About this RNA:
Chemical mapping of a 177-nucleotide RNA with DMS. For DMS the reverse transcriptase was MarathonRT. It was measured as part of the RMDB library OK1LIB. In probing experiments dimethyl sulfate is read out at A N1 and C N3, which are open when not base-paired. The reactions ran in a buffer of 150 mM KOAc, 10 mM MgCl2 and 150 mM bicine (pH 8.5), at 24 C.

RNA sequence: GGGAACGACUCGAGUAGAGUCGAAAAGAAAUAAAAGCCGGAAAAUAAUGGUAGAGAGAGCUCUGUCAAGACAGAGUGGCCCGGUUUAUGAUUUAAAACCGGAUUGCUAAGACGGCGAAUUAGAAAAGGGAAUUAGUAUCUUCGGAUACUAAUUCCCAAAAGAAACAACAACAACAAC
Reactivity to DMS in 0.01 (KOAc 150mM, MgCl2 10mM, bicine 150mM(pH8.5), 24C), signal-to-noise 1, nucleotides 027 to 126: g000a150a180a040u020a080a110a070a300g000c000c000g000g000a060a070a070a060u020a110a060u050g000g000u000a030g020a080g000a260g020a270g020c010u000c000u000g020u020c160a080a090g020a070c130a010g000a030g000u000g000g000c050c000c000g000g000u000u000u000a020u010g020a060u000u010u030a040a030a030a050c000c000g040g020a050u000u000g000c010u000a000a110g020a190c000g000g030c000g000a060a190u000u000a040g030a020a070a120a080